[RMDB]
RNA sequence: GGGAACGACUCGAGUAGAGUCGAAAAGCGAAAGUUGCCAUGAGACCGUAACUUUCGUAGUCAUUGAUAAAGGGGGAGGUCUCGCUCUUUUGUCAUUGCGGUUGCCUAGAGGCAUGGUCGUUUACCGAAAAGAGCUCAUUCUUCGGAAUGAGCUCAAGCUAGGAAUAUUCUUCGGAAUAUUCCUAGCAAAAGAAACAACAACAACAAC
Reactivity to 2A3 in 0.01 (KOAc 150mM, MgCl2 10mM, bicine 150mM(pH8.5), 24C), signal-to-noise 3, nucleotides 027 to 156: g010c000g000a010a000a000g010u000u020g000c030c040a120u090g050a020g000a070c020c010g010u010a000a000c000u010u010u010c020g000u010a020g040u040c030a040u030u150g050a080u140a120a080a030g020g010g000g010g000a050g000g030u020c020u010c020g010c010u040c000u020u090u050u030g020u050c020a040u010u120g030c030g030g020u020u040g000c000c010u060a060g030a110g050g000c020a020u050g020g010u010c020g010u050u030u070a240c040c000g020a030a030a020a010g010a000g000c000u000c010a000u000u000c000u010u040c120g060g000a000a000u000g000a010g100c000u000c000a000a000
Reactivity to DMS in 0.01 (KOAc 150mM, MgCl2 10mM, bicine 150mM(pH8.5), 24C), signal-to-noise 2, nucleotides 027 to 156: g000c000g010a030a050a040g010u010u000g000c010c020a170u000g030a120g030a080c060c110g000u000a020a030c000u000u000u000c000g030u000a030g020u000c090a150u000u000g020a090u010a030a060a080g010g020g020g070g000a080g040g000u010c030u000c030g000c040u010c020u000u000u000u000g020u000c040a130u000u000g000c020g040g030u000u000g010c030c050u000a150g040a170g020g020c050a070u010g030g010u000c040g080u020u010u000a120c010c020g010a070a060a110a150g000a030g010c020u000c000a020u000u000c000u000u000c300g070g010a040a010u000g000a000g020c010u010c000a000a060